[RMDB]
RNA sequence: GGGAACGACUCGAGUAGAGUCGAAAAGAUCGGAAACAGCAGCAGGUGAGUCCGCCUUAUGUGAAGGAUCGGCUGAAACACGAGGAAAUACUGAGCCAACGCAAGACGGUAGCCGAACUGUAGCAACAAAACGCUUACGUGUUCGCACGUAAGCGAAGCCAAUUUAUAAGUUCGCUUAUAAAUUGGCAAAAGAAACAACAACAACAAC
Reactivity to 2A3 in 0.01 (KOAc 150mM, MgCl2 10mM, bicine 150mM(pH8.5), 24C), signal-to-noise 5, nucleotides 027 to 156: g030a060u120c060g030g040a040a070a030c040a030g030c020a000g010c000a010g000g040u040g020a070g080u030c030c030g010c010c000u150u120a160u130g080u020g050a060a020g030g010a060u060c060g010g000c030u050g020a080a080a010c090a030c110g060a060g000g130a060a060a020u120a110c080u070g020a000g040c020c020a050a010c040g000c040a010a040g030a020c000g000g030u040a010g010c020c000g020a010a010c020u050g030u090a020g020c020a000a050c010a060a070a020a020c010g000c000u010u000a000c000g000u010g030u030u060c150g020c090a000c000g000u000a010a000g000c000g000a010a000
Reactivity to DMS in 0.01 (KOAc 150mM, MgCl2 10mM, bicine 150mM(pH8.5), 24C), signal-to-noise 2, nucleotides 027 to 156: g000a070u010c050g020g000a050a050a080c030a110g060c020a070g010c060a090g000g020u000g010a160g010u000c000c020g000c040c040u000u000a040u000g020u000g000a070a230g000g000a090u000c020g000g000c070u000g000a140a130a080c070a120c060g000a160g030g020a060a070a110u000a060c030u000g000a120g000c040c000a060a150c110g020c030a040a090g010a090c120g000g000u000a170g020c040c000g000a060a080c050u000g020u000a100g000c100a010a150c100a030a100a110a190c040g000c000u000u000a020c020g050u000g000u000u020c260g020c020a010c000g000u000a020a010g010c000g010a010a060

Conditions: 150 mM KOAc, 10 mM MgCl2 and 150 mM bicine (pH 8.5), 24 C. The record gives the reactivity of an RNA of 207 nucleotides to 2A3 and DMS.